About this RNA: The record gives the reactivity of an RNA of 207 nucleotides to 2A3 and DMS. The reactions ran in a buffer of 150 mM KOAc, 10 mM MgCl2 and 150 mM bicine (pH 8.5), at 24 C. It was measured as part of the RMDB library OK3TST.
RNA sequence: GGGAACGACUCGAGUAGAGUCGAAAAGGAUCUGAGUACUUAUAAGUGCGAAGUGAGUGAGGGUCUUACGAGCACAAAUUACAGCCCUCUAUUAAGUAUCGAAGAUCGGCCGGAGAUCGAGAUACGACUAUUAGCCGGCGACUGUACGAAGAUCCGACCUAAUCCUGGGUUUCGACCCAGGAUUAGGAAAAGAAACAACAACAACAAC
Reactivity to 2A3 in 0.01 (KOAc 150mM, MgCl2 10mM, bicine 150mM(pH8.5), 24C), signal-to-noise 4, nucleotides 027 to 156: g000g000a010u010c010u010g010a000g030u000a010c020u090u120a110u090a300a090g010u010g030c030g060a080a030g020u010g010a010g010u120g020a040g010g000g010u100c000u020u010a000c000g020a030g000c030a010c040a050a170a160u170u150a080c050a070g060c000c010c000u000c000u000a080u080u150a130a040g010u000a000u020c000g040a080a000g000a040u000c020g050g000c060c040g010g020a130g000a020u000c000g000a010g000a110u000a020c000g020a010c020u090a090u240u090a040g090c030c010g000g000c000g070a070c090u120g000u000a000c000g000a010a000g000a000u000c000c000g000a000
Reactivity to DMS in 0.01 (KOAc 150mM, MgCl2 10mM, bicine 150mM(pH8.5), 24C), signal-to-noise 1, nucleotides 027 to 156: g000g000a070u000c000u000g000a300g000u000a070c000u000u000a050u000a060a280g040u000g030c030g010a110a220g050u000g030a080g010u000g010a180g000g020g050u000c010u000u000a020c000g010a300g000c040a030c100a090a050a160u000u030a110c130a160g010c000c000c030u000c010u010a030u000u000a010a300g010u000a000u000c010g010a220a060g050a050u000c040g040g090c160c180g010g000a300g000a070u010c000g000a300g000a010u000a040c010g010a220c160u030a090u000u000a110g000c000c020g020g040c070g010a140c050u000g000u000a080c090g000a170a080g030a010u020c010c030g000a090